[RMDB]
RNA sequence: GGGAACGACUCGAGUAGAGUCGAAAACGUACGGAAACCAUCCGACGGAUGGGAAAGCAUGCACCCGUACGGAAACCAUCCUCGUCGGUGCAUGCGAAAGGAUGGGUGGACACAACCAUCAUACGAGGAUGGGAAAGCAUGCCUCUAGUGACAACACAGGUUAAGAUAUUUUCGAAUAUCUUAACCUAAAAGAAACAACAACAACAAC
Reactivity to DMS in 0.01 (KOAc 150mM, MgCl2 10mM, bicine 150mM(pH8.5), 24C), signal-to-noise 3, nucleotides 027 to 156: c030g020u000a070c040g000g000a210a090a170c010c010a020u000c020c000g020a130c150g040g030a050u000g000g000g010a050a040a080g000c010a020u020g000c000a120c080c000c010g030u000a060c030g020g020a050a100a090c020c010a010u000c000c010u010c020g020u000c120g000g050u000g020c000a040u000g030c010g020a040a130a070g030g000a030u010g040g000g020u000g030g020a190c200a070c080a050a060c010c000a020u000c040a190u000a070c040g020a050g000g010a050u000g000g000g020a050a060a110g030c060a050u010g010c000c020u000c040u010a110g020u010g020a130c090a040a080c080a140c160
Reactivity to 2A3 in 0.01 (KOAc 150mM, MgCl2 10mM, bicine 150mM(pH8.5), 24C), signal-to-noise 5, nucleotides 027 to 156: c010g000u010a000c000g000g040a050a080a030c010c000a010u030c020c060g180a170c220g090g030a050u080g020g000g050a050a040a020g000c000a010u000g000c020a020c010c000c000g000u010a010c010g020g020a020a010a000c000c000a000u000c010c000u000c000g050u030c060g090g000u030g000c000a000u010g010c000g020a090a020a000g080g010a010u050g000g020g030u040g050g080a070c070a020c010a200a000c010c000a010u040c010a010u030a070c000g000a000g010g010a010u000g010g000g010a050a010a010g060c030a040u120g020c010c010u060c030u090a060g080u070g070a050c050a120a000c050a050c050